[RMDB]
RNA sequence: GGGAACGACUCGAGUAGAGUCGAAAAUCAGAUUCAAUAAAUGAGAACUGAGUGGUUGAGCUUUCACCAAAUAGUCUCUUUCCCCAUUCUCAGCAACUUCUCUUUCAGCCAAAGACUUCUGUCAGAGACUUCUUCUGUCGGUCAAGACAACCCCCACCUCGGAGUAUCAAUUCGUUGAUACUCCGAGAAAAGAAACAACAACAACAAC
Reactivity to 2A3 in 0.01 (KOAc 150mM, MgCl2 10mM, bicine 150mM(pH8.5), 24C), signal-to-noise 2, nucleotides 027 to 156: u120c010a010g080a140u160u050c060a080a110u180a280a090a060u130g030a020g010a050a010c070u030g030a020g080u090g010g000u040u060g030a030g000c040u030u080u200c090a090c040c070a080a130a130u080a040g130u060c010u000c000u040u080u110c000c000c000c000a040u070u030c030u020c010a060g020c050a100a070c020u070u020c000u000c000u050u070u020c000a050g010c010c040a060a190a100g070a120c010u070u020c020u120g040u040c030a000g000a060g030a120c000u120u050c020u100u000c040u120g050u040c000g020g080u090c060a070a050g030a020c000a020a110c000c030c020c020c050a000c010

An RNA of 207 nucleotides, treated with 2A3 and read out base by base. The reactions ran in a buffer of 150 mM KOAc, 10 mM MgCl2 and 150 mM bicine (pH 8.5), at 24 C. The data come from the RNA Mapping Database (RMDB), library OK3TST.